[RMDB]
RNA sequence: GGGAACGACUCGAGUAGAGUCGAAAAAAAAAAGCGACCAAAACGUGGAGGAGGAUGGAACACUGGGGGGAGCCGAUACCCAGGACAGGGCAGUCCUGGAGGCAACCGUUAUCCACCUCAGGAAAAAGACAAAGGGAUAGUUCGCUAUCCCUUUGUCAAAAGAAACAACAACAACAAC
Reactivity to DMS in 0.01 (KOAc 150mM, MgCl2 10mM, bicine 150mM(pH8.5), 24C), signal-to-noise 1, nucleotides 027 to 126: a000a040a040a000a110a020g040c100g030a130c130c020a050a050a090a140c140g070u010g000g000a060g000g000a030g010g020a080u000g010g000a060a060c090a010c050u010g060g000g000g000g000g010a130g020c070c030g020a050u010a100c180c000c010a020g020g010a000c020a130g020g000g000c160a050g000u010c000c000u000g000g000a030g010g030c110a040a160c070c040g010u000u000a070u000c000c020a080c000c020u000c000a080g000g020a020a020a050a120a050